[RMDB]
RNA sequence: GGGAACGACUCGAGUAGAGUCGAAAAUGCCAAUCUUUGAAGGAUGUAAUUUCUAGCUUCCUUUGGAAGUUCUUCUGGGUUUAAAAAGCUUCCAGAUGCAAAUAGCUUUAUUGCAAUCUUCUCACCACCAUACCAGGGCAUUCGUGCCCUGGUAUGGAAAAGAAACAACAACAACAAC
Reactivity to 2A3 in 0.01 (KOAc 150mM, MgCl2 10mM, bicine 150mM(pH8.5), 24C), signal-to-noise 4, nucleotides 027 to 126: u190g060c000c000a030a090u050c080u070u080u120g030a010a010g010g000a010u010g020u050a040a040u050u140u050c090u010a000g000c000u020u020c010c000u080u000u070g010g010a020a010g010u060u000c010u040u010c040u100g130g020g100u060u140u200a100a160a020a000a010g020c000u070u020c010c000a010g000a050u030g040c090a020a050a120u090a080g030c040u040u070u080a020u030u000g000c010a020a090u000c000u000u000c010u010c030a090c070c000a050
Reactivity to DMS in 0.01 (KOAc 150mM, MgCl2 10mM, bicine 150mM(pH8.5), 24C), signal-to-noise 1, nucleotides 027 to 126: u000g000c090c080a080a030u050c060u000u000u000g010a000a000g000g000a000u000g000u000a010a010u000u000u060c080u060a060g000c030u000u070c090c110u000u000u140g010g000a000a000g030u020u000c080u000u000c010u000g000g000g010u000u060u000a040a200a060a040a010g000c110u010u000c050c020a000g030a000u000g020c200a000a050a210u010a000g040c300u000u020u030a080u010u000g000c000a000a020u010c040u000u000c010u000c190a040c190c140a140